[RMDB]
RNA sequence: GGGAACGACUCGAGUAGAGUCGAAAAAGGUGAUUUCUCCUGCACCUUUAUCAAUGGAGGAACUCGACUUUGCUGUGGGUCCCAAAGGGACCUUAGGUGCAGACAGUUAGCGGCGGUGAAGUGUGAGCAUAGGUUCGUGUCUUCGGACACGAACCAAGCAUGGUAUUAACUUCGGUUAAUACCAUGCAAAAGAAACAACAACAACAAC
Reactivity to 2A3 in 0.01 (KOAc 150mM, MgCl2 10mM, bicine 150mM(pH8.5), 24C), signal-to-noise 4, nucleotides 027 to 156: a010g000g020u010g000a030u010u040u040c010u010c010c010u130g070c050a020c020c000u110u280u120a080u050c070a030a060u260g020g000a010g010g010a030a030c040u030c030g030a000c020u020u030u040g000c020u020g030u080g020g000g020u020c010c010c010a130a140a110g010g010g000a000c000c000u010u040a040g000g000u050g000c010a030g060a130c010a030g040u110u140a030g020c050g020g020c010g020g020u050g010a040a020g030u060g040u070g110a010g000c100a140u100a200g010g000u000u000c000g000u000g010u000c000u020u040c170g070g000a000c000a000c000g000a000a000c000c000a000a000
Reactivity to DMS in 0.01 (KOAc 150mM, MgCl2 10mM, bicine 150mM(pH8.5), 24C), signal-to-noise 1, nucleotides 027 to 156: a070g000g020u000g010a300u000u010u000c010u000c020c000u000g030c000a050c030c010u000u020u010a070u000c200a100a040u010g000g030a070g020g000a060a040c020u000c000g040a030c060u000u000u000g000c030u000g010u000g030g000g000u000c010c010c000a060a110a190g050g000g030a040c020c010u000u000a050g060g040u000g020c010a160g000a120c010a090g010u000u030a120g010c090g000g010c000g020g050u000g000a050a070g000u000g000u000g010a080g050c060a190u010a090g020g020u000u000c000g010u000g000u000c000u000u010c300g060g010a050c010a010c000g000a000a000c000c020a020a110